[RMDB]
RNA sequence: GGGAACGACUCGAGUAGAGUCGAAAAGCAUAGCGUCAAGUUGGUUGACCAGAAGUCUGGUUAGCAAACAGAGUAAAACGAAAAGGUUAGACGCACUCUGUGAAAAAGUACGAAAGUACAAAGAUAAGGUCCACAGAUAAUUCGUUAUCUGUGGACCAAAAGAAACAACAACAACAAC
Reactivity to DMS in 0.01 (KOAc 150mM, MgCl2 10mM, bicine 150mM(pH8.5), 24C), signal-to-noise 2, nucleotides 027 to 126: g030c150a120u010a050g020c000g010u000c020a150a160g000u000u000g030g030u000u000g040a030c000c000a000g030a300a200g000u000c000u000g000g000u010u000a000g000c000a070a020a030c000a010g010a070g000u010a060a040a020a050c030g020a070a090a160a080g000g000u000u000a070g000a060c000g020c070a080c030u010c020u000g000u020g000a090a050a090a110a110g000u000a000c000g010a070a030a210g020u000a030c000a050a110a110g000a140u000a070a100
Reactivity to 2A3 in 0.01 (KOAc 150mM, MgCl2 10mM, bicine 150mM(pH8.5), 24C), signal-to-noise 1, nucleotides 027 to 126: g070c020a000u080a040g050c000g000u020c110a120a150g030u000u110g070g000u000u030g020a000c000c000a010g050a270a020g160u070c000u000g030g000u030u020a000g040c040a060a000a040c020a000g080a000g090u170a000a270a040a020c000g030a160a020a000a040g120g010u010u000a030g010a010c000g060c000a050c010u000c020u040g140u040g050a150a050a010a020a100g000u000a000c020g010a170a010a020g000u000a020c030a000a070a010g100a080u190a120a000